An RNA of 177 nucleotides, treated with DMS and 2A3 and read out base by base.
Conditions: 150 mM KOAc, 10 mM MgCl2 and 150 mM bicine (pH 8.5), 24 C.
For 2A3, 5,994 sequencing reads were counted.
2A3 adducts were read by reverse transcription with SuperScript II with manganese.
It was measured as part of the RMDB library OK2TRN.
For DMS the reverse transcriptase was MarathonRT.
RNA sequence: GGGAACGACUCGAGUAGAGUCGAAAAGCGCCGCCGAGUCGAGCAGCGCGGCACCGAGCAGUUCGACCUCGGCUGCCGCCUCGGCGACCAGCGUCGCGGCCGAACCCCCGGCUCAGCCGUGCACCGAGUACCGUAGUAUGUUCGCAUACUACGGUACAAAAGAAACAACAACAACAAC
Reactivity to DMS in 0.01 (KOAc 150mM, MgCl2 10mM, bicine 150mM(pH8.5), 24C), signal-to-noise 6, nucleotides 027 to 126: g010c050g040c060c020g020c000c020g020a150g000u000c030g000a170g010c190a030g020c180g010c050g010g000c030a040c020c000g000a020g020c190a130g010u010u000c190g000a080c220c010u000c000g010g000c230u000g000c000c000g010c030c000u000c060g000g000c010g000a030c030c040a080g000c040g000u000c010g010c030g010g020c040c030g000a060a120c020c020c030c040c050g010g000c010u010c070a090g000c020c020g000u010g020c100a160c050c030g020a210
Reactivity to 2A3 in 0.01 (KOAc 150mM, MgCl2 10mM, bicine 150mM(pH8.5), 24C), signal-to-noise 4, nucleotides 027 to 126: g010c020g010c010c010g000c000c020g030a060g030u030c020g020a040g080c140a030g050c100g000c000g110g000c020a010c020c020g000a020g000c090a070g080u250u270c090g080a180c040c020u000c000g050g010c080u000g000c000c000g010c000c000u010c000g060g010c020g000a020c020c010a020g050c000g050u080c020g020c000g000g020c030c010g060a170a150c020c000c010c020c010g020g010c050u060c150a030g000c010c010g070u080g010c010a080c050c060g050a050